Annotation: The record gives the reactivity of an RNA of 207 nucleotides to 2A3 and DMS. The data come from the RNA Mapping Database (RMDB), library OK3TST. For DMS, 3,675 sequencing reads were counted. DMS adducts were read by reverse transcription with MarathonRT.
[RMDB]
RNA sequence: GGGAACGACUCGAGUAGAGUCGAAAAGGGCGAUACCGGGCCCGAUACCGGAAUUAGUAGUUUUCUACGAGAGGCCCAAUCUGCGGCCUAAUGCAGUGUAGGUCGAAUCGAGGACCGAGACUCGAUAAUUACGUCGAUAGAUGGACGAUUGCAUCAACCUAAUACGAUGGUUCGCCAUCGUAUUAGGAAAAGAAACAACAACAACAAC
Reactivity to 2A3 in 0.01 (KOAc 150mM, MgCl2 10mM, bicine 150mM(pH8.5), 24C), signal-to-noise 4, nucleotides 027 to 156: g010g000g000c020g020a020u040a130c010c010g010g010g020c020c000c050g040a020u030a020c010c010g000g060a070a040u120u080a030g020u000a030g020u040u070u140u190c010u020a030c020g020a010g010a050g120g000c010c010c000a010a050u030c060u050g010c040g040g020c040c020u030a030a020u060g010c030a010g020u010g030u180a050g000g020u000c020g030a020a020u010c020g000a010g010g070a020c080c170g040a030g000a010c010u000c010g000a000u060a120a070u150u140a050c050g000u030c010g040a070u070a150g090a020u070g060g000a010c040g050a070u000u170g020c020a050u030c020a040a040
Reactivity to DMS in 0.01 (KOAc 150mM, MgCl2 10mM, bicine 150mM(pH8.5), 24C), signal-to-noise 2, nucleotides 027 to 156: g000g040g040c060g010a150u000a070c040c020g000g060g000c030c030c110g010a100u000a100c020c000g000g010a100a120u000u010a120g020u000a080g020u010u000u000u000c010u010a030c020g000a080g000a190g040g010c000c000c010a100a150u000c020u000g000c050g030g000c050c030u000a020a060u010g000c080a070g040u000g010u000a050g000g020u000c020g020a140a090u000c070g000a260g000g010a180c030c020g010a210g020a100c010u000c010g010a090u000a100a160u000u000a070c070g010u000c020g030a160u000a150g020a140u010g020g010a060c000g020a140u000u000g000c010a150u020c070a080a170